[RMDB]
RNA sequence: GGGAACGACUCGAGUAGAGUCGAAAAAGCGCGCAUACUACGGUAUGCGCGCAAUCAGAAAUCGGGAAUGAUGUUCUCCCCUGGGAUUCCAAAACCCCUGUUUCGCUGAUGACGUCUGCUUUUUUAAUCACCACCGUUUGGUUCGCCAAACGGUGAACAAAAUCUUAGUGUUCGCACUAAGAUUUUGAAAAGAAACAACAACAACAAC
Reactivity to 2A3 in 0.01 (KOAc 150mM, MgCl2 10mM, bicine 150mM(pH8.5), 24C), signal-to-noise 1, nucleotides 027 to 156: a020g010c000g000c000g070c010a070u000a010c020u010a000c090g110g000u020a000u000g000c000g000c000g070c010a000a000u020c000a010g050a020a130a030u050c020g030g010g040a080a130u060g090a080u090g090u110u020c040u040c070c000c000c040u040g000g030g040a050u090u070c070c000a020a070a090a080c000c000c000c000u000g060u010u060u030c060g000c020u040g020a090u060g000a070c040g020u020c040u040g050c000u080u180u000u040u120u230a060a140u120c060a030c070c000a010c000c000g000u010u000u000g030g010u050u040c150g000c040c000a000a000a000c000g010g000u000g000a010a000
Reactivity to DMS in 0.01 (KOAc 150mM, MgCl2 10mM, bicine 150mM(pH8.5), 24C), signal-to-noise 1, nucleotides 027 to 156: a090g010c010g020c000g110c000a000u000a020c000u000a100c300g060g000u000a000u000g030c000g060c000g080c010a000a000u010c040a100g010a020a060a060u010c110g030g000g010a080a120u000g020a100u000g010u010u000c060u000c010c030c020c050u010g020g010g010a070u000u000c070c170a070a090a080a060c040c000c000c020u000g010u010u000u000c060g030c050u010g010a090u010g030a070c060g010u010c030u000g000c010u040u010u000u010u010u010a040a100u010c030a160c120c000a000c010c000g000u000u000u000g000g010u000u020c300g000c000c000a000a010a000c020g010g010u000g000a010a030